[RMDB]
RNA sequence: GGGAACGACUCGAGUAGAGUCGAAAAAAGAUAUGGACGAUACUACCCACCGAUUAGGAAGCAUCGAUCGCUUGUCGGAAACGACAAGCGGGAGCUUCGACCUAAUCGAGGUAUCGUCCUAAGUCAAGCUAUAAACAUGGUUCGCCAUGUUUAUAGCAAAAGAAACAACAACAACAAC
Reactivity to DMS in 0.01 (KOAc 150mM, MgCl2 10mM, bicine 150mM(pH8.5), 24C), signal-to-noise 6, nucleotides 027 to 126: a100a090g000a130u000a220u010g000g010a010c000g010a020u000a010c010u010a150c020c010c020a300c100c010g000a010u010u000a010g010g010a050a230g010c050a140u000c100g020a210u020c010g010c000u000u000g010u000c000g020g000a080a080a170c010g000a000c000a000a000g020c000g010g010g000a160g010c070u000u000c040g020a300c120c000u000a000a000u000c000g010a050g010g010u000a010u000c010g010u000c000c000u000a010a070g000u010c160a140a140
Reactivity to 2A3 in 0.01 (KOAc 150mM, MgCl2 10mM, bicine 150mM(pH8.5), 24C), signal-to-noise 4, nucleotides 027 to 126: a000a000g290a130u300a160u180g000g010a000c000g000a010u000a010c010u170a280c000c040c040a020c030c000g000a010u000u000a000g050g000a040a000g000c020a110u300c030g090a040u060c000g000c010u000u000g010u000c020g030g040a090a060a060c010g010a000c000a000a000g010c020g000g000g010a010g000c020u050u040c050g070a070c000c010u000a000a000u000c000g000a010g010g000u000a000u000c010g000u000c000c000u000a030a000g150u130c160a120a060